An RNA of 177 nucleotides, treated with DMS and 2A3 and read out base by base.
RNA sequence: GGGAACGACUCGAGUAGAGUCGAAAACGAGUGGCCGAUCGGCAAAGGGGCUUACAAUUUUACAACACCAGAUUUCCAACUAACACCACACCACUGAGAUAUUAGUAUAGCCAAUCCUCUCACUGCCCGCUGUAGACCUAUUCGUAGGUCUACAGCGAAAAGAAACAACAACAACAAC
Reactivity to DMS in 0.01 (KOAc 150mM, MgCl2 10mM, bicine 150mM(pH8.5), 24C), signal-to-noise 2, nucleotides 027 to 126: c060g000a060g050u000g010g020c070c050g000a070u000c050g020g050c000a040a060a100g010g000g000g010c050u000u020a060c100a040a050u000u000u000u000a100c120a110a000c070a070c050c000a050g020a140u000u000u010c050c020a040a130c100u000a070a110c090a080c020c040a090c020a050c060c040a020c060u020g000a100g020a140u000a020u000u000a070g040u000a060u010a110g010c020c030a010a110u010c020c030u020c040u020c070a070c020u000g000c080c030
Reactivity to 2A3 in 0.01 (KOAc 150mM, MgCl2 10mM, bicine 150mM(pH8.5), 24C), signal-to-noise 1, nucleotides 027 to 126: c010g000a040g020u050g030g000c000c050g060a160u040c040g020g040c020a040a000a070g040g040g000g000c000u000u070a020c020a130a100u020u070u100u120a030c030a090a030c000a030c040c030a040g020a110u010u070u000c010c010a040a010c040u070a070a000c010a020c040c010a010c010a010c040c000a050c020u020g040a040g000a090u100a050u120u130a060g080u030a040u110a080g010c000c060a010a030u040c010c030u020c010u020c040a050c040u060g010c020c020

High DMS reactivity at an A or C suggests that its Watson-Crick edge is free. The DMS profile rests on 1,031 reads.